[RMDB]
RNA sequence: GGGAACGACUCGAGUAGAGUCGAAAAGAUAUGGACCGCCUUUUGACGGAACCACAUCGGAAACGAUGUCCCUUCCGAUAAGGGCGGUCCUAAGUCAAACGGUCUGUACGUUCGCGUACAGACCGAACUUGGAUCUGAUCUUCGGAUCAGAUCCAAGAAAAGAAACAACAACAACAAC
Reactivity to DMS in 0.01 (KOAc 150mM, MgCl2 10mM, bicine 150mM(pH8.5), 24C), signal-to-noise 1, nucleotides 027 to 126: g000a040u000a300u000g020g010a040c000c000g010c030c000u000u000u000u000g070a110c300g000g000a010a000c180c100a020c010a010u000c000g000g000a140a100a120c000g000a010u000g050u000c050c100c050u010u000c010c000g080a190u000a010a010g010g040g010c000g000g010u000c000c000u000a020a060g010u000c070a080a070a250c000g000g010u000c000u000g010u000a010c000g050u000u080c260g010c000g000u000a000c010a010g000a000c000c000g010a000a030